[RMDB]
RNA sequence: GGGAACGACUCGAGUAGAGUCGAAAACCGGACGGCGCCCUCGCACUAGUUCCGCUGUGGGUUCGCCUACAAGAACGUACGGUGUUGAGGCCCUGUCCGCUGCUGCGCUGCCACCUACUCUUGGCGCCAUGUGUUAAUGCUUCGGCAUUAACACAUGAAAAGAAACAACAACAACAAC
Reactivity to 2A3 in 0.01 (KOAc 150mM, MgCl2 10mM, bicine 150mM(pH8.5), 24C), signal-to-noise 4, nucleotides 027 to 126: c010c000g000g010a010c000g000g020c060g020c060c020c000u000c020g010c000a010c010u040a040g020u000u000c020c010g020c050u000g000u010g010g020g000u020u050c230g070c040c000u020a010c010a060a120g000a010a010c010g030u130a020c100g030g000u030g010u120u300g020a020g000g000c010c000c000u020g000u000c000c020g020c030u080g000c010u040g000c020g010c050u060g060c030c030a100c020c010u110a130c020u080c020u130u120g020g000c010g000c000
Reactivity to DMS in 0.01 (KOAc 150mM, MgCl2 10mM, bicine 150mM(pH8.5), 24C), signal-to-noise 4, nucleotides 027 to 126: c150c000g000g000a030c000g010g020c160g000c180c010c010u000c010g000c000a020c010u000a250g000u000u010c010c040g010c040u000g000u000g010g010g010u010u020c200g010c000c000u000a000c000a040a120g010a050a000c000g010u010a060c260g000g000u000g010u000u020g020a020g010g010c060c180c010u000g010u000c010c020g000c080u010g010c030u000g010c050g010c040u010g000c060c030a090c080c030u000a050c080u000c060u010u000g000g010c020g010c040
Structure probing data (2A3 and DMS) for a 177-nucleotide construct. Reactivities are rounded to 0.1 and cut off at 0 and 3. The DMS profile rests on 4,849 reads. For 2A3 the reverse transcriptase was SuperScript II with manganese. 2A3 is a SHAPE reagent: it acylates the 2'-hydroxyl of flexible nucleotides of all four kinds. The 2A3 profile rests on 8,241 reads. Conditions: 150 mM KOAc, 10 mM MgCl2 and 150 mM bicine (pH 8.5), 24 C.